Source: RMDB library 15KLIB, as collected in RNAgym. An RNA of 170 nucleotides, treated with 2A3 and DMS and read out base by base. For 2A3, 17,769 sequencing reads were counted. For DMS the reverse transcriptase was MarathonRT. For DMS, 25,274 sequencing reads were counted.
RNA sequence: GGGAACGACUCGAGUAGAGUCGAAAAGCGAUGGUAAGAGUGGAGGAAAGUUCGGAGGGAAAUCCCAAGAAGGUCAUUCGAGAUUCAAGAGGUGAGGAGGGAUCCCCGAGACGCUGGAGGAGCACCGUACCCGGUAACUUCGGUUACCGGAAAAGAAACAACAACAACAAC
Reactivity to 2A3 in 0.01 (KOAc 150mM, MgCl2 10mM, bicine 150mM(pH8.5), 24C), signal-to-noise 6, nucleotides 027 to 129: g040c020g030a020u080g020g040u070a030a030g020a040g030u080g020g010a000g000g000a040a060a010g050u040u050c010g000g020a010g000g010g020a030a040a040u050c020c000c000a000a030g030a010a010g040g010u030c030a050u100u100c050g020a020g020a050u090u050c050a040a020g000a010g030g030u080g020a010g000g010a010g000g020g010a020u050c000c000c000c000g020a020g010a020c040g020c060u030g010g020a050g010g000a000g000c020a010c030c020g030u060a060c000
Reactivity to DMS in 0.01 (KOAc 150mM, MgCl2 10mM, bicine 150mM(pH8.5), 24C), signal-to-noise 4, nucleotides 027 to 129: g000c000g000a010u000g030g030u040a050a080g010a030g030u040g030g020a020g020g040a040a030a060g020u020u030c040g010g010a030g000g000g000a000a000a000u020c000c000c000a100a120g020a020a020g000g030u040c060a090u020u050c140g030a070g030a060u030u040c090a050a070g030a010g000g050u000g010a040g000g000a060g030g020g020a040u020c020c040c040c000g020a080g000a080c110g020c070u040g000g000a050g020g000a060g000c010a020c000c000g000u040a100c180